About this RNA
The record gives the reactivity of an RNA of 177 nucleotides to DMS. The RNA was probed in 150 mM KOAc, 10 mM MgCl2 and 150 mM bicine (pH 8.5) at 24 C. Source: RMDB library OK2TST, as collected in RNAgym.
[RMDB]
RNA sequence: GGGAACGACUCGAGUAGAGUCGAAAAGUAUUUUUUAAGUCCUUUUUUGUUUCAAAGUUUGCCAUGUGAGCUUAACUCAGUUCAUUCUGCUAUUAUUACAAGCAUCACCUCUUUGAAGCUGUUAUCAUAUCAUGAGUCCAUUCGUGGACUCAUGAUAAAAAGAAACAACAACAACAAC
Reactivity to DMS in 0.01 (KOAc 150mM, MgCl2 10mM, bicine 150mM(pH8.5), 24C), signal-to-noise 2, nucleotides 027 to 126: g000u020a010u000u000u010u000u020u010a040a190g000u000c000c000u000u000u000u000u000u000g030u000u000u000c020a030a030a050g010u000u000u000g020c200c140a090u010g020u000g010a100g010c080u000u020a100a110c200u000c040a010g010u010u000c260a100u000u000c030u000g000c210u000a060u010u020a080u000u010a060c150a040a020g000c030a080u000c070a040c040c130u000c030u000u010u010g010a030a070g040c010u000g000u000u000a080u000c080a100
About this RNA:
High DMS reactivity at an A or C suggests that its Watson-Crick edge is free.